Source information:
Chemical mapping of a 207-nucleotide RNA with DMS and 2A3. Reactivities are given for positions 27 through 156. The 2A3 profile rests on 3,229 reads. It was measured as part of the RMDB library M2RFPK.
[RMDB]
RNA sequence: GGGAACGACUCGAGUAGAGUCGAAAACGUUGUCAUCGACAACACCCUAUGCAUUCAUGCUCUGUAAGGAUGCGCCGAAAGGUGAGCAAGGCCGAGUUGCCCAGACCUGAAAUGCAACACUUUAGAGAAAACCCGAAGCAGUUCGCUGCUUCGGGAAGUGUCAUAUUAUCUUCGGAUAAUAUGACACAAAAGAAACAACAACAACAAC
Reactivity to DMS in 0.01 (KOAc 150mM, MgCl2 10mM, bicine 150mM(pH8.5), 24C), signal-to-noise 2, nucleotides 027 to 156: c160g000u010u000g010u010c020a160u000c120g020a110c010a040a030c000a120c010c010c000u000a050u020g000c010a040u000u010c000a240u010g030c020u000c050u050g000u010a240a260g010g030a040u020g020c000g050c030c030g030a130a140a170g000g030u020g010a100g000c010a180a140g020g000c010c050g020a150g000u010u000g020c000c010c010a080g010a050c020c010u000g010a080a060a130u000g020c030a060a070c030a100c070u010u010u000a090g020a140g000a070a030a060a290c000c020c010g000a020a020g000c000a050g020u000u010c300g010c020u000g000c010u000u000c000g020g040g000a000a000
Reactivity to 2A3 in 0.01 (KOAc 150mM, MgCl2 10mM, bicine 150mM(pH8.5), 24C), signal-to-noise 5, nucleotides 027 to 156: c080g000u000u000g020u010c100a270u180c300g020a000c000a010a010c010a060c010c000c000u040a090u080g000c010a010u020u000c040a050u130g020c040u000c000u030g040u070a040a020g020g030a030u030g000c000g020c010c000g070a110a040a020g010g000u020g040a050g000c060a030a050g040g000c030c030g180a090g070u140u080g060c010c020c020a010g020a080c010c020u050g040a060a040a000u070g030c030a100a030c040a060c110u110u170u230a140g000a010g030a080a140a020a020c000c000c010g000a000a000g010c000a000g000u070u160c130g030c100u000g000c000u000u000c000g010g010g000a000a000